The record gives the reactivity of an RNA of 177 nucleotides to 2A3 and DMS. The DMS profile rests on 1,722 reads. For 2A3, 2,717 sequencing reads were counted.

RNA sequence: GGGAACGACUCGAGUAGAGUCGAAAAGAUAUGGACGUGGACUUUGAUCAUGUCGUAACAUCUAUCGGAAACGAUAGUGGACAUGGGAGUGCACGUCCUAAGUCAAAUCGCCAGUUCGCUGGCGAAAUCCAGUGAUCAACUUCGGUUGAUCACUGGAAAAAGAAACAACAACAACAAC
Reactivity to 2A3 in 0.01 (KOAc 150mM, MgCl2 10mM, bicine 150mM(pH8.5), 24C), signal-to-noise 2, nucleotides 027 to 126: g020a020u040a050u140g010g000a000c030g020u030g070g140a060c080u070u140u180g160a160u300c030a010u010g020u020c000g070u060a100a000c030a220u200c020u000a020u000c020g040g040a070a010a010c020g000a020u000a000g030u070g120g000a000c000a000u000g000g090g000a000g010u120g040c010a000c000g000u000c010c000u000a010a000g010u010c000a020a010a100u000c000g000c000c000a000g020u080u080c290g030c160u000g000g030c020g000a020a020a020
Reactivity to DMS in 0.01 (KOAc 150mM, MgCl2 10mM, bicine 150mM(pH8.5), 24C), signal-to-noise 2, nucleotides 027 to 126: g020a040u000a300u020g010g000a000c010g050u010g000g000a000c000u000u010u020g000a100u000c000a010u000g020u010c010g020u000a040a150c260a020u010c020u000a020u000c020g000g010a130a070a170c000g040a010u000a000g010u000g000g000a020c000a000u000g000g040g000a010g030u000g000c000a020c010g000u000c000c000u000a010a030g010u000c040a040a100a120u000c020g000c000c000a010g010u000u020c300g020c000u000g020g010c000g000a000a030a040
The RNA was probed in 150 mM KOAc, 10 mM MgCl2 and 150 mM bicine (pH 8.5) at 24 C.